[RMDB]
RNA sequence: GGGAACGACUCGAGUAGAGUCGAAAAGCUGUGGGCAGUUAAUCGGUGCCAUACGUGGGCUACUUACGGUCGAUGGCGGUGAUUGUCGCUGGGUGGUACCGGCAACACAUGCCGUCUGGAUACCGCCGAGUGGUGACGGGUUCGCCCGUCACCACUCAAAAGAAACAACAACAACAAC
Reactivity to 2A3 in 0.01 (KOAc 150mM, MgCl2 10mM, bicine 150mM(pH8.5), 24C), signal-to-noise 2, nucleotides 027 to 126: g120c040u070g000u100g040g000g030c010a140g000u020u130a130a080u070c080g100g020u050g060c000c060a070u110a060c090g020u100g000g100g000c000u060a060c050u190u150a000c040g060g010u060c030g090a020u010g000g000c010g070g000u030g040a140u070u080g040u000c000g000c030u020g000g000g000u100g030g000u030a180c000c000g000g000c000a030a050c000a000c000a000u050g000c000c000g020u000c030u050g070g000a110u100a110c000c030g030c030c090